[RMDB]
RNA sequence: GGGAACGACUCGAGUAGAGUCGAAAACGCGACGGUAGUCGACAUUUCGGAUGAGGUCGCAAGGGUGUUUCUUUCAGUACCCUUGGUGCUCUACCGACUGUUAUCUUCGAUCGCUACACGCUCAUCGCGUCCUCAUCACCUUCGGGUGAUGAGGACGAAAAGAAACAACAACAACAAC
Reactivity to DMS in 0.01 (KOAc 150mM, MgCl2 10mM, bicine 150mM(pH8.5), 24C), signal-to-noise 1, nucleotides 027 to 126: c090g000c000g000a030c010g010g020u000a010g020u000c080g020a010c080a040u000u020u000c020g000g030a280u020g000a080g020g000u000c100g050c010a000a000g000g000g000u000g000u020u000u000c180u010u010u010c270a090g010u000a030c000c010c010u000u000g000g000u010g000c010u000c060u010a300c000c000g000a000c300u020g000u010u010a090u000c020u000u000c010g000a100u000c010g000c000u000a020c200a080c110g000c100u010c120a130u000c210g000
Reactivity to 2A3 in 0.01 (KOAc 150mM, MgCl2 10mM, bicine 150mM(pH8.5), 24C), signal-to-noise 2, nucleotides 027 to 126: c040g020c020g000a020c010g020g140u180a010g000u080c240g030a000c020a010u110u160u000c010g020g010a040u030g040a000g000g060u110c060g000c250a000a000g010g030g010u060g080u050u160u110c030u100u290u140c060a020g040u020a020c030c000c000u000u010g010g000u160g080c000u000c040u000a200c000c000g000a030c010u050g000u040u070a060u110c020u020u030c040g300a300u000c020g030c010u060a040c080a020c150g120c000u080c020a110u090c140g040